[RMDB]
RNA sequence: GGGAACGACUCGAGUAGAGUCGAAAAUAUGUACUAGCUUCGGCUAGUACAUAAAAAGAUAUGGACUUUAAUGGGAGCCUAUAAUCGGAAACGAUUAUGAGGCGAAGAACAUUUGAGUCCUAAGUCAAAGGUAACACUCCAUUCGUGGAGUGUUACCGGACUUGGAUAGGUUCGCCUAUCCAAGUCCAAAAGAAACAACAACAACAAC
Reactivity to 2A3 in 0.01 (KOAc 150mM, MgCl2 10mM, bicine 150mM(pH8.5), 24C), signal-to-noise 3, nucleotides 027 to 156: u080a010u010g000u000a000c000u000a010g010c000u020u060c300g020g010c000u000a000g000u010a000c000a000u000a000a020a000a000a000g000a000u010a000u030g010g000a000c010u000u030u050a010a000u010g010g060g020a050g000c000c000u000a000u000a000a000u000c000g010g000a000a000a000c000g000a000u000u020a020u080g300a030g000g000c010g010a030a020g020a010a010c000a000u000u010u040g010a000g010u000c000c000u000a000a000g000u000c040a140a060a060g010g000u010a000a000c000a000c000u000c000c000a030u070u090c300g090u090g000g000a000g000u000g000u000u000a000c000c000
Reactivity to DMS in 0.01 (KOAc 150mM, MgCl2 10mM, bicine 150mM(pH8.5), 24C), signal-to-noise 1, nucleotides 027 to 156: u000a020u000g030u000a000c000u010a000g010c000u020u000c300g050g050c000u000a020g010u010a020c000a010u000a000a090a090a140a120g000a010u000a010u010g000g000a020c000u000u000u000a010a010u000g020g000g000a080g000c000c000u000a040u000a000a010u000c000g000g000a010a040a010c010g060a040u010u000a000u000g010a030g040g040c010g000a060a120g000a130a260c000a020u010u000u010g000a040g050u000c000c010u020a010a080g000u010c010a100a180a150g010g000u000a010a020c000a010c000u000c000c000a080u000u020c300g020u000g000g000a010g010u010g000u000u010a000c010c010
Structure probing data (2A3 and DMS) for a 207-nucleotide construct. For DMS the reverse transcriptase was MarathonRT. The reactions ran in a buffer of 150 mM KOAc, 10 mM MgCl2 and 150 mM bicine (pH 8.5), at 24 C. For 2A3, 5,534 sequencing reads were counted.